[RMDB]
RNA sequence: GGGAACGACUCGAGUAGAGUCGAAAAGCUGAGUUAUGAUGGUUUGAUGCAUCAUAGUCUGAGUAGUGAUCCUCAGACACUCAGCACAGACAGUAUGUCUCUAUGGAUCACUACAUAGAGGCUUGUGCAUCAAACCACAAGCACAUACUGUAGCUGACGAUGCUAGCUAGUUCGCUAGCUAGCAUCGAAAAGAAACAACAACAACAAC
Reactivity to DMS in 0.01 (KOAc 150mM, MgCl2 10mM, bicine 150mM(pH8.5), 24C), signal-to-noise 2, nucleotides 027 to 156: g000c010u000g010a080g000u010u010a060u000g000a120u010g020g010u020u000u010g010a090u000g010c020a030u020c120a130u010a100g060u000c010u010g000a110g030u000a020g040u000g000a060u000c010c000u000c040a050g000a040c040a090c010u000c010a140g000c150a220c190a120g000a280c050a100g000u000a030u010g010u000c010u000c020u000a110u000g040g000a150u000c040a050c010u010a000c010a080u000a110g020a090g000g000c010u000u000g020u010g020c020a110u000c100a060a020a040c040c000a000c010a030a080g050c110a170c080a040u010a000c060u000g020u000a030g060c020u000g010a250
Reactivity to 2A3 in 0.01 (KOAc 150mM, MgCl2 10mM, bicine 150mM(pH8.5), 24C), signal-to-noise 5, nucleotides 027 to 156: g010c010u050g010a000g050u170u040a050u060g140a100u030g010g000u000u000u010g000a010u010g000c020a010u060c050a100u200a050g010u020c010u030g090a020g070u020a000g000u000g010a010u000c000c000u040c030a000g000a000c000a010c020u060c040a040g110c070a020c010a020g120a030c020a010g090u150a040u140g000u020c020u000c020u120a110u170g010g010a000u000c000a000c000u010a000c010a020u220a020g210a010g040g000c000u010u020g010u000g000c000a000u020c010a000a000a000c000c000a000c000a000a000g030c010a030c010a040u070a030c020u030g080u170a000g020c010u010g000a030
This 207-nucleotide RNA was probed chemically with DMS and 2A3. Conditions: 150 mM KOAc, 10 mM MgCl2 and 150 mM bicine (pH 8.5), 24 C. It was measured as part of the RMDB library OK3TST.